[RMDB]
RNA sequence: GGGAACGACUCGAGUAGAGUCGAAAAGGGGUCAACGAGAGGCUGGAGGGAGCCUCGUACUGAAGCCUCCACGGUACGGGCAUCGAUCUCCAGCUCCCCACCUCGUUGACGGAGGCACCCAAAUCUCAUGAAUGAGGUUCGCCUCAUUCAUGAGAAAGAUAAUGCAACCGUUCGCGGUUGCAUUAUCAAAAGAAACAACAACAACAAC
Reactivity to 2A3 in 0.01 (KOAc 150mM, MgCl2 10mM, bicine 150mM(pH8.5), 24C), signal-to-noise 2, nucleotides 027 to 156: g040g010g000g000u000c000a000a000c000g000a000g000a000g010g010c000u000g000g010a010g000g000g010a010g000c020c020u130c090g000u000a000c010u020g030a100a020g020c010c000u000c010c000a000c020g010g000u000a000c000g010g010g010c030a080u300c210g010a000u010c000u000c000c000a000g000c000u010c000c000c000c000a010c000c000u000c000g000u000u000g000a000c010g010g000a000g000g000c000a030c000c000c000a040a090a120u030c000u000c000a010u000g000a000a000u000g000a000g020g040u030u060c230g050c030c010u010c000a000u010u000c000a000u000g000a000g000a000a000a000
Chemical mapping of a 207-nucleotide RNA with 2A3. For 2A3 the reverse transcriptase was SuperScript II with manganese. Source: RMDB library RNAMAK, as collected in RNAgym. The RNA was probed in 150 mM KOAc, 10 mM MgCl2 and 150 mM bicine (pH 8.5) at 24 C.